[RMDB]
RNA sequence: GGGAACGACUCGAGUAGAGUCGAAAAGUAACACGUGGCCCAACUACCCUACAGACCGCGAUAACCUCGGGAAACUGAGGCCAAUAGCGGAUAUCACUCUCAUGCUGGAGUGCAGAGAGUGAGAAACAAUGUUCCUCUUCUUCGGAAGAGGAACAUUAAAAGAAACAACAACAACAAC
Reactivity to 2A3 in 0.01 (KOAc 150mM, MgCl2 10mM, bicine 150mM(pH8.5), 24C), signal-to-noise 4, nucleotides 027 to 126: g050u050a090a060c030a010c180g050u110g060g010c000c000c000a060a000c010u080a040c000c010c020u060a100c060a040g100a100c000c000g000c000g000a020u080a050a000c000c000u000c010g020g020g000a000a020a000c030u040g000a000g000g050c000c000a060a030u040a020g000c000g000g000a010u060a020u020c000a000c000u000c000u000c040a300u010g040c040u130g160g270a210g100u170g010c000a000g010a000g000a000g000u000g010a020g000a010a050a000c100
Reactivity to DMS in 0.01 (KOAc 150mM, MgCl2 10mM, bicine 150mM(pH8.5), 24C), signal-to-noise 3, nucleotides 027 to 126: g030u010a120a110c150a060c090g000u000g010g010c000c030c050a110a090c080u010a090c040c010c010u000a120c220a080g000a130c010c020g000c000g000a020u020a260a300c000c000u010c000g010g000g000a150a060a150c010u010g030a010g000g030c030c030a080a090u030a060g000c000g000g000a140u000a040u000c000a010c000u000c010u000c010a070u000g030c040u000g000g020a120g030u000g030c010a030g000a020g000a020g010u000g000a000g000a090a090a090c180
This 177-nucleotide RNA was probed chemically with 2A3 and DMS.
The reactions ran in a buffer of 150 mM KOAc, 10 mM MgCl2 and 150 mM bicine (pH 8.5), at 24 C.
For DMS the reverse transcriptase was MarathonRT.
It was measured as part of the RMDB libraries RFM100 and RFMREP.
Values are in units of 0.01, from 0 to 300, in steps of 10.